This 177-nucleotide RNA was probed chemically with 2A3.
RNA sequence: GGGAACGACUCGAGUAGAGUCGAAAAGAUAUGGAUAUGCACGACGAUAAGCGAUAGUCGGAAACGACUAUUCGCUUUUGACGUCGGCAUAUCCUAAGUCAAAAGUCCGCAUGUUCGCAUGCGGACAUCUGAGCGUUAAGUUCGCUUAACGCUCAGAAAAAGAAACAACAACAACAAC
Reactivity to 2A3 in 0.01 (KOAc 150mM, MgCl2 10mM, bicine 150mM(pH8.5), 24C), signal-to-noise 1, nucleotides 027 to 126: g000a010u010a010u080g010g000a000u010a020u020g000c220a130c300g030a000c000g220a300u140a300a010g000c000g000a000u000a010g010u000c000g000g000a000a000a010c000g000a020c020u010a020u000u060c000g000c010u000u010u010u050g050a020c010g000u010c000g000g000c010a020u000a000u000c000c000u000a000a000g000u020c000a090a030a220a160g020u010c000c000g010c000a000u020g060u050u160c300g000c170a000u010g040c000g000g010a000c010a000
Source: RMDB library TTRDES, as collected in RNAgym. For 2A3, 1,800 sequencing reads were counted.